[RMDB]
Annotation: This 177-nucleotide RNA was probed chemically with DMS and 2A3. The reactions ran in a buffer of 150 mM KOAc, 10 mM MgCl2 and 150 mM bicine (pH 8.5), at 24 C. It was measured as part of the RMDB library OK2TST.
RNA sequence: GGGAACGACUCGAGUAGAGUCGAAAAUGGUCAAGGGCACGCCGGAUGGUGGUGGCACCGGCCCUGUCACCAUCGUGGUGGAGGACAUCACUGACGCUUCUGUCAUCGGCAAAUCUCUGCUGACGGCGCUUACAAUGCUAUUCGUAGCAUUGUAAGCAAAAGAAACAACAACAACAAC
Reactivity to DMS in 0.01 (KOAc 150mM, MgCl2 10mM, bicine 150mM(pH8.5), 24C), signal-to-noise 7, nucleotides 027 to 126: u010g020g030u000c050a080a060g010g000g010c150a150c200g000c010c010g010g010a080u010g010g020u000g010g010u000g010g020c030a060c060c030g010g000c040c090c230u000g020u000c020a020c010c000a030u000c040g010u010g010g020u000g000g000a110g000g010a160c060a040u000c050a050c040u010g010a070c060g020c190u010u010c070u010g010u000c020a050u000c020g000g000c020a100a130a100u010c070u000c040u000g000c080u000g010a040c060g010g020c100
Reactivity to 2A3 in 0.01 (KOAc 150mM, MgCl2 10mM, bicine 150mM(pH8.5), 24C), signal-to-noise 5, nucleotides 027 to 126: u150g040g000u040c030a030a030g020g000g000c040a010c080g010c020c010g070g000a050u090g010g020u010g010g050u010g020g000c020a020c040c000g040g000c000c010c010u040g030u030c000a000c010c000a010u030c030g050u060g010g030u020g020g050a100g040g100a030c010a040u040c000a010c050u030g030a020c020g030c090u140u060c050u170g020u010c010a030u040c020g010g000c000a040a130a130u060c060u020c020u070g080c040u030g010a020c020g050g040c060